[RMDB]
RNA sequence: GGGAACGACUCGAGUAGAGUCGAAAACUGCGCGUCGUCGGAGCGCUGCCGCAAGGCGCCCACGGCCGCGCUAAGGAGCCCCUCCGGGGUGGGGAGCAGACACCCGCCGAAGAUGCGCCGCUCGGGACCCAGGCUAGGAAUUCGUUCCUAGCCUGGGAAAAGAAACAACAACAACAAC
Reactivity to 2A3 in 0.01 (KOAc 150mM, MgCl2 10mM, bicine 150mM(pH8.5), 24C), signal-to-noise 1, nucleotides 027 to 126: c030u040g020c000g000c000g000u020c000g000u000c080g000g040a220g090c000g000c020u030g080c030c040g070c150a070a110g010g000c010g030c000c010c030a000c000g000g000c010c060g000c000g000c000u000a040a040g070g000a060g000c020c040c000c000u040c090c130g040g000g000g080u020g000g000g010g020a050g050c010a010g070a060c040a100c090c010c000g000c000c000g020a040a040g070a000u120g010c030g010c020c010g000c030u020c000g030g000g040a020
The data come from the RNA Mapping Database (RMDB), library OK1LIB. This 177-nucleotide RNA was probed chemically with 2A3. As a SHAPE reagent, 2A3 marks flexible, mostly unpaired nucleotides at the ribose 2'-OH. Values cover nucleotides 27 to 126.